This 207-nucleotide RNA was probed chemically with 2A3. For 2A3 the reverse transcriptase was SuperScript II with manganese. The 2A3 profile rests on 744 reads.
[RMDB]
RNA sequence: GGGAACGACUCGAGUAGAGUCGAAAAGAUAUGCGUUCGCGCAUAUCAAAAAGCGUACUACCUUGAAGCGCUCCUCCCCACCCUUCAUCCCAAAUAGGAUGAAGGAGGGAGAACUACGCUCAAGGUAUCGCAAAAAACGCCUGUUUCGACAGGCGAAGACAUUGACUUCCUUCGGGAAGUCAAUGUCAAAAGAAACAACAACAACAAC
Reactivity to 2A3 in 0.01 (KOAc 150mM, MgCl2 10mM, bicine 150mM(pH8.5), 24C), signal-to-noise 1, nucleotides 027 to 156: g000a020u000a010u000g000c000g010u000u100c260g000c000g020c160a000u000a000u000c000a050a000a000a000a160g130c100g030u150a200c050u000a000c010c030u010u000g040a190a050g000c000g000c000u000c000c000u000c000c000c000c000a250c030c000c000u000u000c000a000u010c100c000c000a080a300a080u300a110g000g000a000u000g010a000a000g000g000a000g000g000g020a000g000a000a020c040u100a000c050g000c000u000c010a000a000g000g000u010a000u040c030g000c030a030a030a030a030a030a020c000g000c000c000u010g000u000u080u030c150g060a000c000a000g020g010c020g010a050a000